[RMDB]
Conditions: 150 mM KOAc, 10 mM MgCl2 and 150 mM bicine (pH 8.5), 24 C.
The record gives the reactivity of an RNA of 207 nucleotides to DMS and 2A3.
Reactivities are given for positions 27 through 156.
For DMS, 3,729 sequencing reads were counted.
DMS adducts were read by reverse transcription with MarathonRT.
Source: RMDB library M2RFPK, as collected in RNAgym.
For 2A3 the reverse transcriptase was SuperScript II with manganese.

RNA sequence: GGGAACGACUCGAGUAGAGUCGAAAACGAGUGCAAUAAAGACGCGGUUGCCGAUCGGUAUGGAUGCCACUGUGACGGCUCAAUCACACAAGUGCCAACGAUAACGAGGCGCUCGCUAUUGCUGCGUAAAAGCGACGAUCGUUCGCGAUCGUCGCAAGUUUUAUAUGUACUUCGGUACAUAUAAAACAAAAGAAACAACAACAACAAC
Reactivity to DMS in 0.01 (KOAc 150mM, MgCl2 10mM, bicine 150mM(pH8.5), 24C), signal-to-noise 1, nucleotides 027 to 156: c030g020a090g000u010g010c030a130a130u000a050a050a140g020a060c010g010c030g020g010u010u000g020c070c030g030a050u000c030g000g000u000a080u000g010g020a210u010g000c030c020a080c050u000g020u020g020a080c010g030g030c150u010c190a070a110u000c010a030c000a040c090a050a070g020u000g000c010c030a070a070c050g000a040u000a040a080c090g010a230g020g000c010g040c010u010c010g030c010u000a060u010u000g020c000u010g020c030g010u000a070a070a070a150g030c020g040a040c000g030a010u020c000g050u000u000c260g030c000g050a000u000c040g000u010c000g030c000a010a030
Reactivity to 2A3 in 0.01 (KOAc 150mM, MgCl2 10mM, bicine 150mM(pH8.5), 24C), signal-to-noise 5, nucleotides 027 to 156: c030g020a040g070u100g020c010a030a030u080a090a160a060g120a070c060g030c040g080g060u100u260g010c000c020g050a090u050c020g030g020u110a090u080g050g050a060u070g060c060c010a020c010u020g020u040g060a130c050g060g050c080u080c130a040a070u090c010a010c010a000c010a100a060g000u000g030c020c000a030a020c050g050a040u040a080a030c040g010a060g020g000c010g000c010u040c030g020c020u040a030u050u040g010c040u070g010c010g030u070a040a040a100a100g000c000g000a000c000g010a000u000c000g000u080u060c150g010c010g110a020u010c000g000u000c000g020c000a000a000